[RMDB]
RNA sequence: GGGAACGACUCGAGUAGAGUCGAAAAGAUAUGGAUUCCAAGUGGGAGAUGUUCGGAAACGAAUACAUCAUCGAUCACUGGAAUCCUAAGUCAAACAUCGAGAGUGGCUUCGGCCACUCUCGAUGAACAUUGGUACGCUCUUCGGAGCGUACCAAUGAAAAGAAACAACAACAACAAC
Reactivity to DMS in 0.01 (KOAc 150mM, MgCl2 10mM, bicine 150mM(pH8.5), 24C), signal-to-noise 2, nucleotides 027 to 126: g000a040u000a300u000g010g000a000u000u000c000c010a050a120g030u000g000g000g020a300g010a010u000g000u000u010c000g000g000a120a070a140c030g040a010a100u000a140c210a060u010c040a070u010c030g010a300u000c010a000c000u000g000g000a020a020u000c000c010u010a010a080g010u000c040a170a110a230c010a000u010c000g000a020g000a010g050u000g000g010c010u000u010c200g030g000c000c000a010c000u000c000u000c000g010a000u000g000a080a120
Reactivity to 2A3 in 0.01 (KOAc 150mM, MgCl2 10mM, bicine 150mM(pH8.5), 24C), signal-to-noise 1, nucleotides 027 to 126: g010a000u080a100u150g010g000a030u000u080c030c040a230a180g030u030g000g110g000a070g020a020u000g040u050u070c050g060g000a080a030a020c020g040a070a010u210a180c100a120u250c000a030u150c030g070a110u090c000a000c020u000g000g010a010a000u000c000c000u000a030a010g050u010c050a130a040a150c000a000u000c000g020a000g000a030g000u020g000g000c000u190u160c300g070g030c010c010a000c000u010c000u000c000g000a010u000g000a000a000
Chemical mapping of a 177-nucleotide RNA with DMS and 2A3. The reactions ran in a buffer of 150 mM KOAc, 10 mM MgCl2 and 150 mM bicine (pH 8.5), at 24 C. DMS adducts were read by reverse transcription with MarathonRT.